An RNA of 207 nucleotides, treated with 2A3 and read out base by base.
The reactions ran in a buffer of 150 mM KOAc, 10 mM MgCl2 and 150 mM bicine (pH 8.5), at 24 C.

RNA sequence: GGGAACGACUCGAGUAGAGUCGAAAAUGCUAGUACCACAUUGUUUUAAUUACUGUAGCUUUAUAGUAAGUCUUGAAAUUGAGUAGUAUGAGUCUGCUAACUUGAUUGGCAAUCUUUUUCAAAACUAUUUUGGCUAUUUUCAUUGCUUUGAUUGUGAAAUCAUGCUAGUCUUCGGACUAGCAUGAUUAAAAGAAACAACAACAACAAC
Reactivity to 2A3 in 0.01 (KOAc 150mM, MgCl2 10mM, bicine 150mM(pH8.5), 24C), signal-to-noise 2, nucleotides 027 to 156: u180g000c030u080a070g050u050a040c020c040a030c040a070u050u140g080u040u110u100u260a170a150u150u130a060c030u030g010u010a000g100c000u000u130u100a030u030a010g040u040a170a110g000u000c060u010u030g000a000a030a030u030u030g020a040g010u080a000g040u020a110u200g160a060g100u060c120u040g000c020u050a080a170c010u040u120g050a100u140u000g120g070c000a030a100u040c000u020u110u030u050u030c030a080a060a000a000c030u010a020u020u190u010u070g010g000c030u030a010u030u070u020u020c040a100u040u060g060c020u120u130u150g070a180u060u040g180u170g070a020
Source information: Source: RMDB library OK3TST, as collected in RNAgym. The 2A3 profile rests on 527 reads.